The record gives the reactivity of an RNA of 207 nucleotides to DMS and 2A3.
The 2A3 profile rests on 1,353 reads.
Values cover nucleotides 27 to 156.
DMS adducts were read by reverse transcription with MarathonRT.
For 2A3 the reverse transcriptase was SuperScript II with manganese.
The RNA was probed in 150 mM KOAc, 10 mM MgCl2 and 150 mM bicine (pH 8.5) at 24 C.
RNA sequence: GGGAACGACUCGAGUAGAGUCGAAAAAGGUUCGCUGUGGUGCAACUCUUAUUAGUAACUAAUCCAAAGCAAGUAUAGGAGAACAGGUUUUUAACUAUUUUUAGGCAGAUAAAAAAUAGUAUUUCACAAAAUCGAUUGUCGUUCGCGACAAUCGAAACAUAUUCGGGAGGUUCGCCUCCCGAAUAUGAAAAGAAACAACAACAACAAC
Reactivity to DMS in 0.01 (KOAc 150mM, MgCl2 10mM, bicine 150mM(pH8.5), 24C), signal-to-noise 1, nucleotides 027 to 156: a120g000g000u000u000c040g110c040u030g070u000g000g010u000g030c020a050a080c070u000c030u000u000a110u000u000a080g020u020a050a100c060u000a070a070u000c090c050a070a070a130g040c010a060a050g020u000a080u010a060g000g010a040g000a070a040c070a220g000g000u000u000u020u020u000a080a120c010u000a040u000u020u010u010u000a070g000g040c070a100g000a140u040a000a010a050a000a000a050u010a000g000u020a300u000u000u020c040a090c020a010a040a050a100u000c000g000a030u000u000g000u000c000g000u000u000c250g020c020g020a020c020a020a000u000c030g010a000a030a120
Reactivity to 2A3 in 0.01 (KOAc 150mM, MgCl2 10mM, bicine 150mM(pH8.5), 24C), signal-to-noise 2, nucleotides 027 to 156: a020g050g000u040u050c040g000c020u010g020u040g040g000u030g020c020a030a050c010u010c030u080u110a160u080u080a120g030u040a050a070c070u050a110a090u070c070c010a110a030a000g020c020a050a030g020u030a070u070a110g040g010a020g020a060a040c060a070g010g000u020u020u030u010u050a040a010c000u010a020u050u010u000u000u020a040g010g030c020a020g050a170u160a070a060a000a000a000a000u000a000g020u010a050u020u140u120c050a060c020a080a100a070a150u020c000g000a000u000u000g000u000c000g000u050u040c160g010c020g110a000c000a000a000u000c000g000a000a000a000